[RMDB]
RNA sequence: GGGAACGACUCGAGUAGAGUCGAAAAGUGCGCCUUCACGAAUUUGUUCGAUAAAGAUACGUUGGUCACCGUGAAUAAUUUCACCAGCUGCAUUUUUCCAUGAACCAAACUCGAACCAGAACGGUGCAGGACGUUCGACGUUCGCGUCGAACGUCCUAAAAGAAACAACAACAACAAC
Reactivity to 2A3 in 0.01 (KOAc 150mM, MgCl2 10mM, bicine 150mM(pH8.5), 24C), signal-to-noise 1, nucleotides 027 to 126: g260u080g010c000g030c000c000u080u100c090a000c100g040a050a180u090u000u090g050u110u070c070g000a070u120a030a000a000g080a030u040a130c010g000u040u000g090g000u150c010a000c140c070g000u000g000a080a030u300a240a000u000u180u000c000a000c050c000a070g010c000u020g000c000a040u040u030u030u020u000c000c020a000u130g000a030a060c000c060a050a000a000c090u190c070g010a010a000c000c030a080g030a110a000c090g110g000u000g120c020